[RMDB]
About this RNA
An RNA of 177 nucleotides, treated with 2A3 and read out base by base. It was measured as part of the RMDB library OK1LIB. Conditions: 150 mM KOAc, 10 mM MgCl2 and 150 mM bicine (pH 8.5), 24 C.
RNA sequence: GGGAACGACUCGAGUAGAGUCGAAAAAGGAUAAUUAGCCCAUAUUUGUCGUCGUUAGGCCUAAUAUCUCCACUUACGUCUAACCUUUGUCUGUGGCGCUGAAGUGGCUACCUACAGCACGCACCGCAAAGUGUCCUGCGUUCGCGCAGGACACUUUAAAAGAAACAACAACAACAAC
Reactivity to 2A3 in 0.01 (KOAc 150mM, MgCl2 10mM, bicine 150mM(pH8.5), 24C), signal-to-noise 1, nucleotides 027 to 126: a080g150g000a080u100a110a100u110u100a030g000c000c000c000a000u040a040u150u150u200g130u030c100g000u000c000g070u000u100a020g000g050c040c040u060a150a180u000a010u050c000u000c000c030a050c000u000u050a050c170g030u000c000u000a050a050c080c130u020u010u140g090u090c020u000g110u060g020g000c000g000c120u040g030a100a060g040u000g000g010c000u010a040c000c050u100a040c050a000g000c090a000c000g010c000a000c000c010g000c010